Conditions: 150 mM KOAc, 10 mM MgCl2 and 150 mM bicine (pH 8.5), 24 C. The record gives the reactivity of an RNA of 207 nucleotides to 2A3. Reactivities are given for positions 27 through 156.
[RMDB]
RNA sequence: GGGAACGACUCGAGUAGAGUCGAAAAUCACAGCGGUACGUAAGCCUGGCGGCAUUUGAGAAGUCAGACCGAUAGUAUGAACAUGAUAUAACUGAACAAAUUUUGAAUCAUCAAAUGAAUCAUCACUAUCCGAAUCGCUAUCAGGCUCUGUAGAAUCCUGUCGCUAAAUGUUCGCAUUUAGCGACAGAAAAGAAACAACAACAACAAC
Reactivity to 2A3 in 0.01 (KOAc 150mM, MgCl2 10mM, bicine 150mM(pH8.5), 24C), signal-to-noise 2, nucleotides 027 to 156: u120c010a030c040a100g100c110g170g100u090a060c060g080u060a030a060g010c000c000u010g030g000c020g050g000c030a030u010u110u060g180a180g050a100a080g140u170c100a040g070a100c010c030g000a000u000a010g010u020a020u020g010a030a050c030a030u050g030a020u040a000u040a120a150c110u040g110a110a020c090a070a300a170u150u190u180u220g030a050a020u070c030a020u010c060a040a090a110u140g110a120a050u030c000a000u020c040a000c020u030a050u000c020c020g050a060a000u050c120g000c000u000a030u070c000a010g010g000c040u010c020u070g040u020a070g070a030a000u050c000